[RMDB]
RNA sequence: GGGAACGACUCGAGUAGAGUCGAAAAGAACGCCACUUCGGUGGCGUUCGAAGAUCUACCACACGUAGAUCACUAACGUGUGAGACAUCGAUAGAUGUCAAAUGGUCCGGAAGUUCGCUUCCGGAAAUAAUGAUUUGUGGUUCGCCACAAAUCAUUAAAAAGAAACAACAACAACAAC
Reactivity to DMS in 0.01 (KOAc 150mM, MgCl2 10mM, bicine 150mM(pH8.5), 24C), signal-to-noise 3, nucleotides 027 to 126: g000a000a000c010g010c000c000a010c010u000u010c200g030g000u000g000g010c000g030u000u000c000g000a090a100g010a060u010c000u000a080c070c040a020c040a020c030g010u010a020g000a090u020c300a050c140u000a030a020c040g060u010g010u010g010a300g010a020c000a000u000c000g010a200u010a070g010a000u000g000u000c000a050a040a100u010g010g010u000c000c000g000g010a030a010g010u000u000c250g030c000u000u000c000c000g000g000a000a010a040
Reactivity to 2A3 in 0.01 (KOAc 150mM, MgCl2 10mM, bicine 150mM(pH8.5), 24C), signal-to-noise 1, nucleotides 027 to 126: g010a000a010c010g000c000c000a000c010u040u040c090g130g000u000g000g030c000g020u000u000c020g000a000a000g020a010u000c020u080a070c000c030a010c000a000c050g060u020a020g030a180u150c080a030c150u090a120a010c040g000u000g000u000g040a140g020a050c010a000u010c020g060a060u120a220g000a020u020g010u000c010a110a020a070u260g060g000u000c000c000g000g020a000a010g020u080u190c190g050c130u020u020c010c000g000g000a020a000a000
Conditions: 150 mM KOAc, 10 mM MgCl2 and 150 mM bicine (pH 8.5), 24 C. The record gives the reactivity of an RNA of 177 nucleotides to DMS and 2A3. Reactivities are given for positions 27 through 126. For DMS the reverse transcriptase was MarathonRT. Values are in units of 0.01, from 0 to 300, in steps of 10.